RNA sequence: GGGAACGACUCGAGUAGAGUCGAAAAAGUGAAAGCCUUCAGUUUCAUCACCUGCUAUUUUGUCUGUUGCAAAGUACUCGCAAAUGAGUCUAGUAUUUCAAAAUAUGGGCUUAUCAAAGUAUCGGGGUAUGUGUGACAGUUUUCUUACUGCCAUGAACAUCAGCACUAAUUUCGAUUAGUGCUGAUGAAAAGAAACAACAACAACAAC
Reactivity to 2A3 in 0.01 (KOAc 150mM, MgCl2 10mM, bicine 150mM(pH8.5), 24C), signal-to-noise 3, nucleotides 027 to 156: a020g130u080g030a060a030a000g060c020c000u040u120c060a070g020u030u060u080c030a060u050c030a050c040c030u020g000c040u030a050u070u100u030u040g080u060c120u050g070u040u030g000c030a080a000a130g040u060a100c010u030c080g030c040a020a060a100u080g010a010g010u000c010u030a100g030u000a080u010u090u120c120a150a130a020a010u050a040u020g020g000g000c000u040u020a030u090c040a050a030a050g040u020a030u130c040g010g000g000g020u050a050u120g060u010g030u020g020a020c000a010g020u000u010u070u070c010u030u110a050c020u020g020c040c010a050u190g050a050a030
Reactivity to DMS in 0.01 (KOAc 150mM, MgCl2 10mM, bicine 150mM(pH8.5), 24C), signal-to-noise 2, nucleotides 027 to 156: a080g020u020g010a090a080a120g010c030c050u010u010c090a100g010u010u020u010c020a080u020c020a210c030c010u000g000c070u000a080u010u000u000u000g010u000c060u000g020u000u000g000c010a030a030a140g010u000a010c020u000c040g020c050a070a070a070u000g020a030g050u000c010u000a060g050u010a010u000u010u000c230a080a060a080a110u000a040u000g010g040g000c000u000u010a020u000c050a060a060a070g000u000a070u000c050g020g000g010g030u010a070u000g020u000g010u000g000a010c010a010g030u000u010u010u010c120u000u010a010c020u010g000c010c010a050u000g010a050a200
This 207-nucleotide RNA was probed chemically with 2A3 and DMS. For 2A3 the reverse transcriptase was SuperScript II with manganese. Source: RMDB library OK3TST, as collected in RNAgym. Values cover nucleotides 27 to 156. The RNA was probed in 150 mM KOAc, 10 mM MgCl2 and 150 mM bicine (pH 8.5) at 24 C. For DMS the reverse transcriptase was MarathonRT.